Record summary:
An RNA of 207 nucleotides, treated with 2A3 and DMS and read out base by base. The DMS profile rests on 3,668 reads. For DMS the reverse transcriptase was MarathonRT.
RNA sequence: GGGAACGACUCGAGUAGAGUCGAAAACGCUGGGGGAGUACGGGUUCACGGGAGAAAUCUGAAGCGCGCACGGAUUUCAUCGAUCGUGACCUAAAACCCUGUGCUGAAGCGCGCACGGCAACCGAAAGGUGCGAAAAGAGCUUGUUCGCAAGCUCAACGGCAAUAUAAUAUUCGUAUUAUAUUGCCGAAAAGAAACAACAACAACAAC
Reactivity to 2A3 in 0.01 (KOAc 150mM, MgCl2 10mM, bicine 150mM(pH8.5), 24C), signal-to-noise 4, nucleotides 027 to 156: c040g000c020u050g000g020g020g000g000a080g090u120a070c110g030g030g010u120u200c000a000c000g010g010g000a040g000a000a000a010u000c000u030g050a210a050g020c000g000c000g000c020a000c000g020g010a010u000u050u000c080a150u300c020g010a010u020c000g010u000g000a020c000c000u020a020a010a030a050c000c000c010u020g010u000g010c010u020g030a130a040g000c010g000c000g000c000a010c000g010g000c000a010a030c020c000g050a090a030a020g030g000u020g010c040g010a080a040a020a070g010a000g000c010u020u010g020u100u110c170g010c160a000a000g010c000u000c020a010a040
Reactivity to DMS in 0.01 (KOAc 150mM, MgCl2 10mM, bicine 150mM(pH8.5), 24C), signal-to-noise 2, nucleotides 027 to 156: c040g020c030u000g010g000g030g030g010a230g030u010a080c140g000g000g030u000u020c050a030c030g000g010g020a090g020a030a030a040u000c010u020g020a010a050g020c010g040c010g010c020a300c030g000g000a030u000u000u010c010a160u000c070g010a130u000c030g020u010g000a030c020c000u010a040a000a060a090c010c000c010u000g020u020g000c000u010g000a060a050g020c000g010c020g000c020a300c050g000g000c050a070a130c030c020g020a080a130a120g060g040u010g000c010g020a060a030a150a120g000a060g010c000u000u020g020u000u040c170g000c020a040a050g000c000u000c000a010a200